Chemical mapping of a 207-nucleotide RNA with DMS and 2A3. The RNA was probed in 150 mM KOAc, 10 mM MgCl2 and 150 mM bicine (pH 8.5) at 24 C. It was measured as part of the RMDB library ARCHII. For 2A3, 863 sequencing reads were counted. For DMS, 1,458 sequencing reads were counted.

RNA sequence: GGGAACGACUCGAGUAGAGUCGAAAAGGGUUAAAUAGAAGAGCUUAAUCAGACUAGCUGAAUGGAAGCCUGUUACUGGGCCGAUGUUUAUGCGAAAUGCUAAUACGGUGACUACGCUCGUAGAUAUUUAAGUGCCGAUAUUUCUGGACGUGGGUUCCUCUACUACUGUCUUCGGACAGUAGUAGAGAAAAGAAACAACAACAACAAC
Reactivity to DMS in 0.01 (KOAc 150mM, MgCl2 10mM, bicine 150mM(pH8.5), 24C), signal-to-noise 1, nucleotides 027 to 156: g000g000g020u000u000a060a020a140u000a110g000a090a160g000a110g020c010u000u000a030a080u020c030a080g020a160c060u000a210g000c010u000g000a050a070u000g020g000a200a060g010c000c090u010g000u000u000a140c230u020g030g040g030c010c020g000a300u020g000u000u000u000a010u030g080c060g020a050a100a100u000g030c090u000a090a080u000a050c070g010g010u000g010a080c060u000a060c200g020c020u000c010g080u000a090g020a150u010a020u000u000u000a020a080g010u000g020c010c020g010a170u030a070u000u000u000c040u020g000g050a090c020g060u000g020g010g000u000u000c010
Reactivity to 2A3 in 0.01 (KOAc 150mM, MgCl2 10mM, bicine 150mM(pH8.5), 24C), signal-to-noise 2, nucleotides 027 to 156: g020g000g020u100u130a020a140a040u100a150g090a170a000g000a010g040c030u010u100a050a030u130c050a030g050a040c030u050a020g010c000u000g040a000a030u020g010g030a010a000g000c000c010u040g090u150u100a100c140u140g000g000g000c000c010g020a020u050g040u010u080u020a160u270g000c000g040a070a060a030u160g010c020u050a060a040u050a090c040g030g000u020g040a030c010u050a020c080g030c050u080c030g020u030a040g020a120u060a120u160u100u120a080a020g050u060g090c000c000g030a020u020a070u090u190u050c070u120g010g000a000c020g010u120g000g030g000u030u050c000